The record gives the reactivity of an RNA of 207 nucleotides to DMS and 2A3. For 2A3 the reverse transcriptase was SuperScript II with manganese. DMS adducts were read by reverse transcription with MarathonRT. The RNA was probed in 150 mM KOAc, 10 mM MgCl2 and 150 mM bicine (pH 8.5) at 24 C.
[RMDB]
RNA sequence: GGGAACGACUCGAGUAGAGUCGAAAAUUGCACUCCGAGUUUCAGCAUGGACGGACUCGUUAAACAAGUCUAUGUACCAAUAGAUGCAGACGAUUAUUCGUAUGCAAUGGCUGCCUGAUUAGCACAAGUUAAUUCAGAAGCCAUCGUCCUGCGGUGACAUGGAUUCAAAGUUCGCUUUGAAUCCAUGAAAAGAAACAACAACAACAAC
Reactivity to DMS in 0.01 (KOAc 150mM, MgCl2 10mM, bicine 150mM(pH8.5), 24C), signal-to-noise 4, nucleotides 027 to 156: u010u010g010c070a130c040u010c060c000g010a050g000u000u000u000c000a090g030c000a020u000g020g010a020c010g050g020a020c000u000c010g000u000u000a010a030a050c070a010a030g000u010c000u000a040u000g040u000a130c110c050a090a140u000a080g000a140u000g010c010a030g010a040c010g010a120u000u010a160u010u000c020g020u000a040u000g020c020a070a040u010g010g020c010u000g010c100c010u000g010a040u000u000a020g000c010a090c270a070a220g020u000u000a010a040u000u000c050a040g010a300a040g020c000c000a000u000c130g020u000c020c040u010g010c230g030g010u000g010a170
Reactivity to 2A3 in 0.01 (KOAc 150mM, MgCl2 10mM, bicine 150mM(pH8.5), 24C), signal-to-noise 9, nucleotides 027 to 156: u140u120g040c030a030c050u010c020c010g010a010g000u010u020u020c040a030g010c030a040u100g010g000a000c000g010g020a010c010u000c030g110u070u040a010a010a020c030a060a010g000u000c000u000a010u020g030u020a110c020c010a050a040u030a070g060a060u100g000c000a010g010a030c010g020a020u060u090a080u290u210c030g030u040a020u030g000c000a020a020u010g000g000c000u010g090c040c010u010g000a010u010u000a000g040c030a090c060a300a140g010u020u020a020a030u160u080c000a010g010a020a000g000c010c000a010u020c010g020u030c010c020u030g020c020g010g030u030g020a010